[RMDB]
RNA sequence: GGGAACGACUCGAGUAGAGUCGAAAAGGAUCCGAUCGAUCCAGUACCUAGCACAUGGAUCGAGCGUCAUGAGUACCUAGUCAUGCUAGGAUCACUCUAGCGUAGCGAUCUACUAGACUAGCACGGAGCCACCGUUUAUGUUCGCAUAAACGGUGGCAAAAGAAACAACAACAACAAC
Reactivity to 2A3 in 0.01 (KOAc 150mM, MgCl2 10mM, bicine 150mM(pH8.5), 24C), signal-to-noise 1, nucleotides 027 to 126: g020g010a010u000c010c050g060a210u080c070g000a000u000c030c010a000g020u070a070c030c000u050a050g000c040a080c020a160u080g000g000a000u000c000g000a010g000c000g090u160c040a070u190g000a020g010u010a030c000c000u000a020g020u060c090a080u300g000c010u000a010g000g010a070u220c040a000c000u030c000u000a040g000c010g060u040a070g080c050g000a000u000c000u000a020c020u050a060g060a060c010u020a020g000c030a080c130g030g030a020
Reactivity to DMS in 0.01 (KOAc 150mM, MgCl2 10mM, bicine 150mM(pH8.5), 24C), signal-to-noise 2, nucleotides 027 to 126: g060g000a030u010c000c100g030a050u040c100g000a010u000c030c000a090g030u010a170c060c040u010a050g030c100a120c070a160u000g000g010a000u010c000g030a100g020c010g010u010c050a080u000g000a030g020u000a070c010c000u000a010g010u000c220a130u030g030c010u010a010g010g000a040u000c090a030c000u000c010u030a300g000c000g040u000a110g000c050g010a020u000c000u000a060c090u000a090g000a130c030u000a020g040c190a070c140g000g000a260